[RMDB]
RNA sequence: GGGAACGACUCGAGUAGAGUCGAAAACAAGAGCAGAACUUGACACUAGGAAAGGAUGGUUCCAUGCGGAAUCCUUUCAGUCUCUGGAGGAGAGAAGAGCAAGCUGCAGCAAUGGGCCCAUUCCCACAUGGUGGAUUUAUCAGAGUCAAGAUCAGAAAUCAGUACGUACGUUCGCGUACGUACUGAUAAAAGAAACAACAACAACAAC
Reactivity to 2A3 in 0.01 (KOAc 150mM, MgCl2 10mM, bicine 150mM(pH8.5), 24C), signal-to-noise 3, nucleotides 027 to 156: c030a040a040g040a020g050c080a020g030a140a070c040u060u100g040a040c040a030c090u090a080g150g000a070a040a040g020g020a060u020g110g020u050u010c020c000a030u210g060c100g040g000a040a050u020c010c010u030u050u000c040a020g060u050c060u030c010u120g040g040a020g060g040a060g000a020g000a140a010g030a020g000c040a100a010g010c050u040g010c050a010g060c010a030a140u050g030g000g000c020c010c020a030u070u050c030c010c000a050c010a080u100g090g000u050g040g000a040u070u060u030a150u050c040a010g020a020g130u020c010a030a040g020a100u050c000a020g080a020a140
Reactivity to DMS in 0.01 (KOAc 150mM, MgCl2 10mM, bicine 150mM(pH8.5), 24C), signal-to-noise 1, nucleotides 027 to 156: c090a090a110g020a110g030c070a030g030a090a220c090u010u010g010a150c040a070c090u010a120g020g010a060a030a090g000g000a060u010g040g010u000u000c040c020a150u020g010c070g000g000a220a100u010c000c010u000u010u000c010a170g000u000c080u000c010u000g020g020a120g010g000a150g000a080g000a060a060g010a130g020c010a040a090g020c030u000g030c040a060g040c000a090a070u000g000g000g000c070c050c010a160u000u000c020c020c000a080c070a070u000g010g000u010g000g020a090u000u000u000a140u020c040a140g020a040g020u000c040a070a120g020a150u010c030a060g010a130a080
The record gives the reactivity of an RNA of 207 nucleotides to 2A3 and DMS. Conditions: 150 mM KOAc, 10 mM MgCl2 and 150 mM bicine (pH 8.5), 24 C. For DMS, 1,829 sequencing reads were counted.